[RMDB]
RNA sequence: GGGAACGACUCGAGUAGAGUCGAAAACAUCUCAGUACCCACAGGAAGAGAAAACAACAUGUGAUUCCGUGAGUAGUGGCGAGCGAAAGCGGAAGAGGCUAAACCAUGGGUGUGUGAUAGCCGGCGGGGACAAUGGAGGAUUCGUCCUCCAUUGUCCAAAAGAAACAACAACAACAAC
Reactivity to DMS in 0.01 (KOAc 150mM, MgCl2 10mM, bicine 150mM(pH8.5), 24C), signal-to-noise 2, nucleotides 027 to 126: c160a090u010c000u030c000a110g020u000a160c040c020c020a070c060a090g020g000a070a070g000a030g010a110a050a070a050c140a090a060c110a070u030g000u020g010a220u000u000c000c010g040u010g010a080g030u000a030g010u010g000g020c200g010a210g000c010g000a070a130a270g010c020g000g000a010a000g020a110g010g000c040u050a050a050a070c080c020a160u010g010g000g000u010g000u030g000u000g000a190u000a060g000c040c020g000g010c080g000g000
Reactivity to 2A3 in 0.01 (KOAc 150mM, MgCl2 10mM, bicine 150mM(pH8.5), 24C), signal-to-noise 3, nucleotides 027 to 126: c060a110u050c020u020c030a070g030u110a040c000c000c040a010c060a090g030g070a050a030g050a040g040a070a040a020a070c100a040a020c010a040u170g030u060g070a160u050u010c000c000g010u000g030a000g010u000a000g010u040g090g170c120g020a000g030c000g000a030a010a000g010c010g000g010a000a000g000a020g010g000c050u040a000a000a070c030c020a030u060g080g000g000u040g000u010g020u000g030a020u040a050g020c010c020g050g000c040g000g030

Source: RMDB libraries RFM100 and RFMREP, as collected in RNAgym. The record gives the reactivity of an RNA of 177 nucleotides to DMS and 2A3. 2A3 is a SHAPE reagent: it acylates the 2'-hydroxyl of flexible nucleotides of all four kinds. For 2A3 the reverse transcriptase was SuperScript II with manganese. Reactivities are given for positions 27 through 126. For 2A3, 1,956 sequencing reads were counted. DMS adducts were read by reverse transcription with MarathonRT.